Conditions: 150 mM KOAc, 10 mM MgCl2 and 150 mM bicine (pH 8.5), 24 C. The record gives the reactivity of an RNA of 177 nucleotides to 2A3 and DMS. High 2A3 reactivity points to a flexible backbone, as in loops and unpaired stretches. It was measured as part of the RMDB library OK2TST. 2A3 adducts were read by reverse transcription with SuperScript II with manganese. The 2A3 profile rests on 1,145 reads.
[RMDB]
RNA sequence: GGGAACGACUCGAGUAGAGUCGAAAACAUAAAUAUAAAGGCGAUGGCCAUUACACGACUGGUACUUAAACGGGCACCGUGUUCCAUAUAACAAUCCUGGUAUCAGUUCUAUUUAAUCCACUGCCGGUACGAUACUUUGGUUCGCCAAAGUAUCGUAAAAAGAAACAACAACAACAAC
Reactivity to 2A3 in 0.01 (KOAc 150mM, MgCl2 10mM, bicine 150mM(pH8.5), 24C), signal-to-noise 2, nucleotides 027 to 126: c030a040u290a110a150a020u300a070u130a140a160a010g040g010c010g040a060u030g040g000c080c000a010u030u040a040c080a010c060g020a000c000u000g000g010u010a000c000u070u220a080a130a090c060g000g050g010c030a010c030c090g060u010g040u070u000c080c040a090u210a020u020a170a020c040a030a060u020c020c010u000g020g010u020a010u020c010a000g000u050u000c010u010a070u020u080u020a020a010u040c000c000a000c020u020g050c000c000g000g000
Reactivity to DMS in 0.01 (KOAc 150mM, MgCl2 10mM, bicine 150mM(pH8.5), 24C), signal-to-noise 2, nucleotides 027 to 126: c040a060u020a110a140a090u000a090u010a120a080a140g010g010c000g040a090u000g010g000c250c180a100u000u000a040c110a090c300g000a030c000u000g030g010u000a010c030u050u010a010a070a040c220g020g010g010c250a070c090c140g010u000g040u010u010c030c070a030u000a070u000a120a050c180a160a080u000c030c010u010g020g040u000a040u030c050a000g010u000u010c110u000a130u000u000u010a030a080u000c040c010a000c030u000g020c000c000g010g020